[RMDB]
RNA sequence: GGGAACGACUCGAGUAGAGUCGAAAAAUGCCAUGAUACCUACCUCUCUAGAUCCCAGCUGAACGAUGAGCACCGCCCGGUGGGGCGAGACGGACGCGAAUCUCCUCUCUGGAGGGAGAGGGGAUAUCGCGUCAACCGGAGGAAUCGGCCAGGUCCGCAGCUAAGGUAGGUUCGCCUACCUUAGCUGAAAAGAAACAACAACAACAAC
Reactivity to 2A3 in 0.01 (KOAc 150mM, MgCl2 10mM, bicine 150mM(pH8.5), 24C), signal-to-noise 1, nucleotides 027 to 156: a000u070g030c030c010a140u300g000a080u190a290c000c000u110a140c030c000u010c000u000c010u020a060g050a300u040c090c010c000a010g120c030u010g040a060a000c070g060a140u110g090a020g130c030a060c060c000g120c000c000c000g000g040u020g000g000g020g000c040g000a040g000a010c070g060g000a000c000g050c000g000a000a000u000c000u000c000c000u030c000u030c000u060g140g120a080g070g010g090a000g030a000g000g000g000g010a000u020a030u060c000g010c000g000u000c000a000a000c010c010g020g000a000g030g000a010a040u150c030g000g010c000c020a060g040g020u000c030c040g000